RNA sequence: GGGAACGACUCGAGUAGAGUCGAAAAAGCAUCUACGGAUGCAAGAAGGUGUACCAUGUGCCCUUAAAGGUGAACCCAGUGCACCUUCAUGAACCGUGGUACACCUUUAAGAACUUGGUAUGCCUAAACAACUGUAUAUCUUCGGAUAUACAGUUGUAAAAGAAACAACAACAACAAC
Reactivity to DMS in 0.01 (KOAc 150mM, MgCl2 10mM, bicine 150mM(pH8.5), 24C), signal-to-noise 9, nucleotides 027 to 126: a090g000c000a010u010c000u000a110c190g030g000a010u000g010c000a090a090g010a060a020g000g010u000g010u000a010c000c010a010u000g010u020g030c150c090c020u000u000a020a010a010g010g010u000g000a060a070c040c070c090a080g010u010g010c010a020c070c060u010u020c120a040u010g000a060a070c030c020g010u010g000g000u000a020c000a000c000c000u000u000u000a030a070g000a080a090c090u010u000g010g000u010a030u010g000c010c000u000a050a130
Reactivity to 2A3 in 0.01 (KOAc 150mM, MgCl2 10mM, bicine 150mM(pH8.5), 24C), signal-to-noise 9, nucleotides 027 to 126: a000g010c000a010u000c010u020a020c220g120g000a000u010g000c010a000a020g080a010a000g010g000u010g000u000a000c000c000a010u030g090u170g110c020c010c020u010u040a040a020a000g000g000u020g030a060a050c020c040c020a020g010u060g050c020a030c010c020u020u050c010a010u010g020a040a040c030c010g030u060g000g000u010a010c000a000c000c000u000u000u000a020a010g000a010a020c030u010u020g040g000u060a030u130g030c010c020u100a180a160